[RMDB]
The data come from the RNA Mapping Database (RMDB), library M2PK90. The record gives the reactivity of an RNA of 177 nucleotides to 2A3 and DMS. High DMS reactivity at an A or C suggests that its Watson-Crick edge is free. 2A3 adducts were read by reverse transcription with SuperScript II with manganese. DMS adducts were read by reverse transcription with MarathonRT. For 2A3, 4,696 sequencing reads were counted. Conditions: 150 mM KOAc, 10 mM MgCl2 and 150 mM bicine (pH 8.5), 24 C.
RNA sequence: GGGAACGACUCGAGUAGAGUCGAAAAUAAAAUCCCAACAAAGGGCCAAGAGGGACGGCAACUUGGCCCAAGCCCAAAGAGCGAGACUCUAAGGGCAUGAGUCGUUCGCAACUCGCUCACAAAAAAACAUAUAAGUGAGGUUCGCCUCACUUAUAUGAAAAGAAACAACAACAACAAC
Reactivity to 2A3 in 0.01 (KOAc 150mM, MgCl2 10mM, bicine 150mM(pH8.5), 24C), signal-to-noise 3, nucleotides 027 to 126: u090a000a090a000a070u040c000c010c010a000a000c030a000a050a030g000g000g000c000c000a010a010g010a030g040g050g080a030c020g030g040c030a050a030c000u010u000g010g010c000c010c000a000a000g000c000c000c000a030a040a000g000a000g010c070g100a060g110a230c010u000c010u070a030a050g000g000g000c000a010u030g000a000g000u020c010g000u010u010c130g050c110a040a090c040u070c080g040c010u050c010a030c110a010a200a010a010a000a000a020
Reactivity to DMS in 0.01 (KOAc 150mM, MgCl2 10mM, bicine 150mM(pH8.5), 24C), signal-to-noise 3, nucleotides 027 to 126: u020a130a060a110a210u000c000c000c000a090a160c300a030a100a080g000g000g020c010c000a010a010g030a190g010g000g000a040c100g010g030c050a160a080c010u000u010g020g010c000c000c010a010a050g010c000c000c000a070a230a050g000a010g010c020g000a140g020a300c040u000c070u000a050a300g010g000g000c010a020u010g000a020g000u000c010g000u000u010c010g000c020a060a120c110u000c020g010c050u010c020a120c150a000a000a040a070a040a070a090

For DMS, 2,369 sequencing reads were counted.